[RMDB]
Description: Source: RMDB library OK2TRN, as collected in RNAgym. Chemical mapping of a 177-nucleotide RNA with 2A3 and DMS. The RNA was probed in 150 mM KOAc, 10 mM MgCl2 and 150 mM bicine (pH 8.5) at 24 C.
RNA sequence: GGGAACGACUCGAGUAGAGUCGAAAAAAAACGAGUCUGGCCUCGAGCUUAACGAGGGGAUUCGGUGGGUCUAUGCAUGAGACUCUGCAAGGGAUUCUCUUGCUACGCUAUAGGUAUCAACGAGAACGAUGCAAUCUUUGUUCGCAAAGAUUGCAUCAAAAGAAACAACAACAACAAC
Reactivity to 2A3 in 0.01 (KOAc 150mM, MgCl2 10mM, bicine 150mM(pH8.5), 24C), signal-to-noise 2, nucleotides 027 to 126: a000a000a000a000c040g020a010g010u000c010u040g290g110c000c000u000c010g010a040g050c100u230u180a170a010c000g000a000g040g040g000g000a030u050u000c020g030g040u030g030g050g010u000c020u020a030u130g180c090a060u220g080a000g010a030c010u000c050u070g040c130a120a080g130g030g060a150u100u000c040u000c000u000u010g000c060u030a000c050g070c060u130a030u110a300g070g070u000a040u150c010a000a080c070g030a020g000a020a040c040
Reactivity to DMS in 0.01 (KOAc 150mM, MgCl2 10mM, bicine 150mM(pH8.5), 24C), signal-to-noise 2, nucleotides 027 to 126: a020a000a000a050c030g020a030g030u000c030u000g010g000c000c000u000c010g000a140g020c280u010u010a160a120c030g000a020g010g000g010g000a010u000u000c000g000g010u010g020g000g010u000c020u000a070u010g020c140a090u000g020a060g010a010c000u000c000u020g000c150a190a100g000g000g020a130u000u000c000u000c000u000u010g010c020u010a030c080g030c180u000a120u000a060g010g020u010a030u010c030a030a040c180g010a070g010a080a050c190